[RMDB]
RNA sequence: GGGAACGACUCGAGUAGAGUCGAAAAACAUGCUGGCCAACCCAACCCCACGAUCCUCCAUCGGCAUGAUCAUGAUGUGUUCUCAAAUAUCAGGCCAGUAAAUCACCAUGCUCGUGCUGGUUAAGGCAACUUAUGCCCAAGUUCGCUUGGGCAUAAAUGAGAUUACGCAGUUCGCUGCGUAAUCUCAAAAAGAAACAACAACAACAAC
Reactivity to 2A3 in 0.01 (KOAc 150mM, MgCl2 10mM, bicine 150mM(pH8.5), 24C), signal-to-noise 1, nucleotides 027 to 156: a000c090a020u000g000c030u000g090g000c000c000a040a020c170c060c000a020a040c000c010c030c000a080c050g030a120u070c020c010u110c100c010a010u030c030g000g020c020a000u010g010a000u000c000a000u000g060a060u120g020u000g030u100u040c050u010c020a100a110a040u240a150u150c070a070g020g000c000c010a000g000u000a000a040a060u170c000a000c010c000a000u010g000c000u000c000g000u000g010c000u000g000g000u000u000a010a010g000g000c000a070a010c060u010u000a000u010g000c000c000c000a020a000g020u020u150c130g010c150u010u020g050g000g000c000a000u000a000a000a000
Structure probing data (2A3) for a 207-nucleotide construct. The data come from the RNA Mapping Database (RMDB), library M2RFOK. Conditions: 150 mM KOAc, 10 mM MgCl2 and 150 mM bicine (pH 8.5), 24 C.